[RMDB]
RNA sequence: GGGAACGACUCGAGUAGAGUCGAAAAAAAAAACACUAGAGCUGACAACUAGCUGCAGUGAGCAGGAGCACACAAGCUGAGCUAGGUGGGAGCUGCGCUGAGCAGCAGCACAGCCAUCAGCAAAAAACAGUAAACUAGGUUUCGACCUAGUUUACUGAAAAGAAACAACAACAACAAC
Reactivity to DMS in 0.01 (KOAc 150mM, MgCl2 10mM, bicine 150mM(pH8.5), 24C), signal-to-noise 3, nucleotides 027 to 126: a000a050a030a040a060a050c070a060c090u000a070g030a140g010c010u000g000a070c060a020a050c010u010a010g010c010u010g000c040a050g000u000g010a110g000c060a100g020g000a070g020c080a040c080a050c090a110a220g040c020u000g000a040g000c020u010a020g010g000u010g000g010g010a090g010c000u000g000c050g010c060u000g000a150g020c150a060g000c000a020g000c010a040c010a040g010c010c030a130u000c010a020g020c010a000a050a030a050a040a080
Reactivity to 2A3 in 0.01 (KOAc 150mM, MgCl2 10mM, bicine 150mM(pH8.5), 24C), signal-to-noise 2, nucleotides 027 to 126: a030a000a000a000a000a000c150a010c030u100a100g000a010g080c000u010g020a030c010a040a030c050u030a010g000c010u090g060c030a010g000u020g050a030g030c040a020g050g270a100g050c030a020c020a010c020a150a040g000c030u060g040a000g040c010u020a010g010g020u020g010g110g020a160g000c000u010g000c000g000c030u060g040a060g120c050a010g060c000a000g010c010a010c000a010g040c000c010a020u010c010a000g000c020a200a050a000a000a000a000